[RMDB]
RNA sequence: GGGAACGACUCGAGUAGAGUCGAAAAUUCGGGCAUGGGGGUAUGCCCGCGCUUAGGCUUUUCUUCCAUCCACAACUUAAGCUUACCGGAGGCUGUACGUGCCUUUACUGCCACGUCGCCUUGACCGCAUGGAGUAAAUGUUCGCAUUUACUCCAUGAAAAGAAACAACAACAACAAC
Reactivity to 2A3 in 0.01 (KOAc 150mM, MgCl2 10mM, bicine 150mM(pH8.5), 24C), signal-to-noise 5, nucleotides 027 to 126: u070u040c020g000g000g000c010a030u040g030g000g030g060g060u120a010u060g010c000c000c000g010c040g010c000u050u050a030g010g020c000u090u080u070u040c040u140u020c020c010a050u050c030c020a070c020a130a050c020u070u100a060a020g020c020u050u110a060c030c040g060g000a010g000g000c030u050g040u190a000c010g000u010g050c010c000u060u070u100a210c230u070g040c060c010a010c010g000u010c000g000c000c000u020u050g100a070c030c040g040
Reactivity to DMS in 0.01 (KOAc 150mM, MgCl2 10mM, bicine 150mM(pH8.5), 24C), signal-to-noise 8, nucleotides 027 to 126: u010u010c020g010g000g010c010a080u010g010g010g030g020g010u000a120u000g000c010c010c010g020c300g000c040u000u000a060g010g000c070u000u000u010u000c080u000u000c060c030a080u010c070c050a070c150a050a060c060u000u010a050a070g000c040u000u000a120c160c040g010g000a050g010g010c030u010g040u000a020c040g020u000g010c260c040u010u010u010a090c170u000g010c260c010a020c020g000u000c030g000c010c010u000u000g000a110c080c090g000
Conditions: 150 mM KOAc, 10 mM MgCl2 and 150 mM bicine (pH 8.5), 24 C. An RNA of 177 nucleotides, treated with 2A3 and DMS and read out base by base. High 2A3 reactivity points to a flexible backbone, as in loops and unpaired stretches. Source: RMDB library OK2TST, as collected in RNAgym. The 2A3 profile rests on 10,602 reads.